[RMDB]
RNA sequence: GGGAACGACUCGAGUAGAGUCGAAAAACAAGUGGUGGUAGUCCGCCACUCUAAGGGGACGCCUCUAGAAGAAGAGGCUAGGGGGUAUUCCGGUGUGGGAUACUUAGUAAUAUGCAACGCUAAUUGCUCAAGGAUAGAUGAUUCGUCAUCUAUCCAAUCAAUUAUCAAGAUUCGUCUUGAUAAUUGAAAAAGAAACAACAACAACAAC
Reactivity to 2A3 in 0.01 (KOAc 150mM, MgCl2 10mM, bicine 150mM(pH8.5), 24C), signal-to-noise 4, nucleotides 027 to 156: a000c080a040a010g010u000g000g000u010g020g060u110a110g130u070c010c010g000c020c000a000c010u000c010u020a060a050g010g010g000g000a030c050g020c010c020u010c000u070a150g080a300a000g050a040a010g000a080g000g000c000u000a010g030g000g000g000g020u030a050u090u070c050c070g060g040u170g050u160g060g000g000a010u020a050c000u050u020a030g040u040a030a160u070a060u260g040c030a060a040c060g010c120u080a080a100u080u080g020c040u060c150a110a070g000g000a000u000a010g000a000u000g010a010u020u050c140g060u000c060a000u000c000u000a000u000c000c000a000a000
Reactivity to DMS in 0.01 (KOAc 150mM, MgCl2 10mM, bicine 150mM(pH8.5), 24C), signal-to-noise 2, nucleotides 027 to 156: a030c110a030a010g030u000g020g010u010g010g020u010a190g040u020c040c000g000c000c000a010c020u010c030u000a090a060g000g000g000g000a120c070g000c000c010u000c010u000a090g020a280a140g000a180a090g000a040g010g020c040u000a040g010g020g010g030g040u010a050u000u000c030c000g000g000u000g010u000g010g010g000a060u000a020c050u000u000a060g040u000a090a130u010a120u010g000c070a060a070c120g000c020u000a100a060u000u000g000c000u000c090a110a240g020g040a030u000a000g000a020u000g000a050u000u000c300g000u000c000a010u000c000u030a000u000c000c010a000a050

Notes: Chemical mapping of a 207-nucleotide RNA with 2A3 and DMS. For 2A3, 3,335 sequencing reads were counted. The data come from the RNA Mapping Database (RMDB), library M2RFPK. Conditions: 150 mM KOAc, 10 mM MgCl2 and 150 mM bicine (pH 8.5), 24 C.